This 207-nucleotide RNA was probed chemically with DMS and 2A3. For DMS, 2,502 sequencing reads were counted. Source: RMDB library OK3TST, as collected in RNAgym. Conditions: 150 mM KOAc, 10 mM MgCl2 and 150 mM bicine (pH 8.5), 24 C.
RNA sequence: GGGAACGACUCGAGUAGAGUCGAAAAUUGUACACCUACCACAAAUAGAAUCUGUCAUUGUGACUCGAAUAGUUAUUGUCUCCUUAAAGCUUCUGAUGGUAACUGUGUUACAUGUGCUCCGUCAUACGUAAAUGCCUUCUUAAGCUAUUUGGAAACCCUCAACAUAGGAGUUCGCUCCUAUGUUGAGAAAAGAAACAACAACAACAAC
Reactivity to DMS in 0.01 (KOAc 150mM, MgCl2 10mM, bicine 150mM(pH8.5), 24C), signal-to-noise 1, nucleotides 027 to 156: u000u000g040u010a070c050a160c030c010u000a120c030c090a120c080a040a100a080u010a060g010a110a160u010c030u010g000u010c030a120u000u000g010u000g010a050c040u030c040g030a110a130u010a110g050u000u000a030u000u000g040u000c000u000c010c000u010u000a050a110a150g050c030u000u000c050u020g010a020u000g000g000u000a030a130c120u000g040u010g030u030u000a040c020a070u000g050u000g010c040u000c130c190g000u000c040a040u000a040c020g020u010a020a010a170u000g000c040c000u010u000c030u010u010a000a060g030c040u000a130u000u000u000g010g000a110a050a100c070c070
Reactivity to 2A3 in 0.01 (KOAc 150mM, MgCl2 10mM, bicine 150mM(pH8.5), 24C), signal-to-noise 5, nucleotides 027 to 156: u120u080g070u110a030c050a060c030c010u090a080c060c030a040c050a050a100a040u110a090g050a050a060u080c110u090g080u050c050a070u110u100g110u110g060a050c030u020c090g090a130a080u070a150g030u080u120a090u150u140g050u030c030u010c030c000u050u070a080a100a040g010c010u020u030c010u050g020a010u000g010g010u050a120a100c120u140g030u050g040u190u020a010c010a070u200g020u020g040c030u070c160c060g150u200c030a010u030a060c040g010u010a000a060a030u050g000c000c000u020u020c000u000u030a020a010g030c020u020a090u040u010u040g010g000a010a060a020c030c000